[RMDB]
Chemical mapping of a 177-nucleotide RNA with DMS and 2A3. The reactions ran in a buffer of 150 mM KOAc, 10 mM MgCl2 and 150 mM bicine (pH 8.5), at 24 C.
RNA sequence: GGGAACGACUCGAGUAGAGUCGAAAAGAUAUGGAUAGAGCAGAGCCAACAUGACCGAAGAACUGAAUUAAUCGGAAACGAUUAAUUCAGGGAGGUCGGGUUGGCGACGAAGCUCUAUCCUAAGUCACAUACUAAACUUCUUCGGAAGUUUAGUAUGAAAAGAAACAACAACAACAAC
Reactivity to DMS in 0.01 (KOAc 150mM, MgCl2 10mM, bicine 150mM(pH8.5), 24C), signal-to-noise 6, nucleotides 027 to 126: g010a050u000a300u010g000g000a010u000a010g010a020g050c010a090g000a290g010c010c000a010a010c010a110u010g000a010c000c000g010a120a170g010a210a240c010u000g010a010a000u000u000a000a010u000c000g000g000a140a100a190c020g000a010u000u000a000a010u000u000c000a010g000g010g000a080g010g010u000c010g020g010g020u000u000g010g010c010g010a030c220g000a120a150g010c000u000c000u000a000u000c000c000u000a010a060g010u010c030a270
Reactivity to 2A3 in 0.01 (KOAc 150mM, MgCl2 10mM, bicine 150mM(pH8.5), 24C), signal-to-noise 2, nucleotides 027 to 126: g020a020u070a040u160g000g000a000u000a010g010a010g030c030a000g040a020g130c010c000a010a010c010a120u040g000a010c000c030g140a270a060g030a140a010c010u020g000a010a000u000u000a010a000u010c020g000g000a110a000a040c000g000a000u000u000a020a000u020u000c000a000g000g000g020a040g020g000u020c000g010g010g000u010u010g000g010c010g020a000c010g000a060a010g000c010u000c000u010a000u000c010c000u010a070a020g020u000c010a020